[RMDB]
RNA sequence: GGGAACGACUCGAGUAGAGUCGAAAACUUGAGCGACUCAGCGACCGGCUGAUAGUCUGUUCCGUGCAGAUAGACAUGAGUUCGGUCACGGUCAGCCUUGACAUGGACUUUGGGAUAGACUGACAAACGUCCCGCAUCACUUCGGUGAUGCGGGACGAAAAGAAACAACAACAACAAC
Reactivity to 2A3 in 0.01 (KOAc 150mM, MgCl2 10mM, bicine 150mM(pH8.5), 24C), signal-to-noise 1, nucleotides 027 to 126: c000u040u060g050a050g000c020g000a050c000u090c300a000g000c010g000a020c000c000g010g000c000u030g020a050u090a000g000u080c000u020g000u020u030c000c030g140u170g190c120a060g000a090u080a000g120a000c000a000u000g050a130g000u110u300c000g010g000u000c000a000c030g000g010u030c020a030g040c020c000u070u020g120a040c040a090u180g000g050a040c010u070u180u090g010g000g040a050u000a130g210a100c140u160g000a000c010a000a140a000